[RMDB]
RNA sequence: GGGAACGACUCGAGUAGAGUCGAAAAUUGUCGGCGACCAUCAACACCAAGGGAGUCUUUGGCUCCACGUACAAUGUGAUAACGCACACCAGGAAGGUCUUUUACUAAUCCACCACGAAUAAGCACGCACCGAGUCUAAUUUCGAUUAGACUCGGUGAAAAGAAACAACAACAACAAC
Reactivity to 2A3 in 0.01 (KOAc 150mM, MgCl2 10mM, bicine 150mM(pH8.5), 24C), signal-to-noise 1, nucleotides 027 to 126: u120u040g110u090c030g000g030c000g010a030c030c000a030u010c030a010a080c020a010c100c080a070a100g050g000g000a040g000u000c000u090u040u090g020g000c020u000c000c010a030c000g030u030a000c040a050a050u050g020u070g060a090u050a120a010c010g000c050a040c010a020c090c030a000g090g030a000a060g010g010u000c000u000u050u030u030a040c040u070a040a040u080c020c010a050c010c000a050c060g070a090a030u140a120a010g000c020a010c110g010
Reactivity to DMS in 0.01 (KOAc 150mM, MgCl2 10mM, bicine 150mM(pH8.5), 24C), signal-to-noise 2, nucleotides 027 to 126: u000u020g000u000c050g000g020c030g000a030c060c010a070u000c020a060a090c120a140c070c050a120a100g000g000g020a030g000u000c000u000u020u020g040g000c010u000c010c000a100c100g030u030a090c180a060a070u030g000u000g000a080u000a080a090c060g010c070a060c050a040c010c000a030g020g010a090a050g010g000u000c010u000u010u000u000a060c080u000a040a040u000c060c010a040c070c080a090c090g000a080a060u010a030a060g000c060a070c210g010